[RMDB]
RNA sequence: GGGAACGACUCGAGUAGAGUCGAAAAGCGAGGUACCGCUGUGCUGACGCGAGGCUGCCGUGACCGAGGAGCUCUUGGACGGCCCGUAGGUUGCGCGUGCCGCGGUAGGCACGUGUCCCGGCCCGGUGACGAAGCGUGUGCAUCGUCCACACGCCCGCCUCGGAAUGCGAUUCGUCGCAUUCCGAGGAAAAGAAACAACAACAACAAC
Reactivity to 2A3 in 0.01 (KOAc 150mM, MgCl2 10mM, bicine 150mM(pH8.5), 24C), signal-to-noise 1, nucleotides 027 to 156: g060c040g050a110g090g090u200a050c100c100g020c300u300g040u000g080c020u050g020a010c000g010c040g040a110g000g080c010u100g010c040c070g010u010g020a000c000c000g090a140g000g000a210g040c020u000c100u180u220g240g060a050c180g020g010c000c000c000g010u080a000g000g000u000u040g000c000g000c010g040u050g050c000c000g000c000g000g030u210a040g000g000c000a000c000g000u040g000u030c000c000c000g080g050c100c020c000g010g040u120g010a010c030g150a050a010g000c000g010u030g000u000g040c050a190u140c290g020u010c050c010a010c040a010c010g020c000c000c000g000

Overview: Chemical mapping of a 207-nucleotide RNA with 2A3. The reactions ran in a buffer of 150 mM KOAc, 10 mM MgCl2 and 150 mM bicine (pH 8.5), at 24 C. Values cover nucleotides 27 to 156.